[RMDB]
An RNA of 177 nucleotides, treated with DMS and 2A3 and read out base by base.
The reactions ran in a buffer of 150 mM KOAc, 10 mM MgCl2 and 150 mM bicine (pH 8.5), at 24 C.
The data come from the RNA Mapping Database (RMDB), libraries RFM100 and RFMREP.
RNA sequence: GGGAACGACUCGAGUAGAGUCGAAAACAGCUCUUAUUGUGUGUGAGGGUUGGCCUCAUUAACCAGCGCUAACAAGCCGUGCAAAUGCUCUGAUUGGGCAGCUUUUAUUGGAUAGUACCAGGCCCUUAUUGCAUUUGAAUUUCGAUUCAAAUGCAAUAAAAGAAACAACAACAACAAC
Reactivity to DMS in 0.01 (KOAc 150mM, MgCl2 10mM, bicine 150mM(pH8.5), 24C), signal-to-noise 5, nucleotides 027 to 126: c050a050g000c030u010c010u000u000a030u010u020g010u020g030u000g010u000g010a010g010g010g030u010u010g000g010c020c010u010c160a060u020u010a060a110c080c040a050g000c070g000c040u010a060a070c120a090a110g000c030c050g010u000g000c070a040a060a100u010g000c030u000c030u000g010a150u020u010g000g000g010c020a070g010c050u010u000u020u010a090u000u000g010g020a110u010a050g010u000a080c040c030a040g010g000c010c010c020u020u000
Reactivity to 2A3 in 0.01 (KOAc 150mM, MgCl2 10mM, bicine 150mM(pH8.5), 24C), signal-to-noise 9, nucleotides 027 to 126: c020a010g010c010u000c010u050u090a140u180u200g100u050g040u040g020u020g070a020g030g020g000u070u060g040g000c000c010u070c040a070u060u080a040a030c040c010a020g030c000g010c040u040a050a030c050a110a020g060c030c020g010u040g020c020a060a080a130u060g020c010u000c030u070g150a240u080u140g020g020g000c010a010g020c020u030u060u040u020a110u080u030g040g010a040u030a120g040u020a100c020c020a040g020g020c010c000c000u010u010